Conditions: 150 mM KOAc, 10 mM MgCl2 and 150 mM bicine (pH 8.5), 24 C. Structure probing data (2A3) for a 207-nucleotide construct. Values cover nucleotides 27 to 156. For 2A3, 966 sequencing reads were counted.
RNA sequence: GGGAACGACUCGAGUAGAGUCGAAAAGCAGCUCGUGUCGCAGGAGGUCGACGACUCGCGGCGCAUCGCCGAGCAUGCCAUCGGGGAACUGAAGCGCGAUACAUCGCCAGCCGCCGGCGCGUAUCUCGGCUGCGGUCCUGACCGUCUCGUAAGUCACGCCAUAGUGGUUGUUCGCAACCACUAUGGCAAAAGAAACAACAACAACAAC
Reactivity to 2A3 in 0.01 (KOAc 150mM, MgCl2 10mM, bicine 150mM(pH8.5), 24C), signal-to-noise 2, nucleotides 027 to 156: g020c000a000g000c070u120c180g030u020g060u040c010g000c060a080g060g160a010g000g050u110c040g030a040c030g020a040c070u030c080g040c010g050g100c030g070c050a100u030c020g050c030c000g000a010g000c090a080u030g080c030c000a110u050c050g010g000g040g070a110a070c050u070g050a120a080g010c010g000c000g030a010u000a080c120a120u140c020g000c030c000a040g060c060c060g020c000c000g000g020c010g020c020g010u060a120u110c080u020c010g070g040c000u000g000c030g000g000u060c000c010u000g000a000c000c030g140u060c070u050c060g050u090a010a020g060u090c040a010c150